[RMDB]
RNA sequence: GGGAACGACUCGAGUAGAGUCGAAAACGACGACGUACAGUACUCUGGCCAGUACGUACGCGCAUGAUACAGCGCUGUGGCCGGUACCUGAUCCGCGUGCGCUCAGCGAUCAUGUGUGCGCAUAGCGAGUAGUUCCAGGUUUCGACCUGGAACUACUAAAAGAAACAACAACAACAAC
Reactivity to DMS in 0.01 (KOAc 150mM, MgCl2 10mM, bicine 150mM(pH8.5), 24C), signal-to-noise 3, nucleotides 027 to 126: c070g000a130c050g000a140c020g020u000a020c030a110g030u000a030c010u000c020u000g030g000c080c070a090g020u000a020c050g020u000a030c020g000c000g010c020a120u010g000a120u020a120c180a150g000c030g010c040u000g010u000g020g010c010c030g010g000u000a040c060c080u000g000a060u010c080c030g000c020g000u000g010c020g000c010u000c030a080g020c060g010a080u020c140a090u000g000u000g000u000g000c000g020c010a030u000a090g000c030g010
Reactivity to 2A3 in 0.01 (KOAc 150mM, MgCl2 10mM, bicine 150mM(pH8.5), 24C), signal-to-noise 3, nucleotides 027 to 126: c040g090a030c060g100a020c010g050u090a030c040a070g020u010a010c020u000c060u130g040g000c050c000a040g020u070a040c060g060u080a060c050g020c010g000c020a030u120g050a060u180a090c130a050g000c020g000c080u040g050u030g120g060c000c000g010g010u070a080c000c030u100g000a080u070c040c020g030c010g000u030g030c000g000c000u030c030a090g160c010g080a150u170c070a080u300g050u020g000u030g040c000g020c010a010u030a070g020c010g000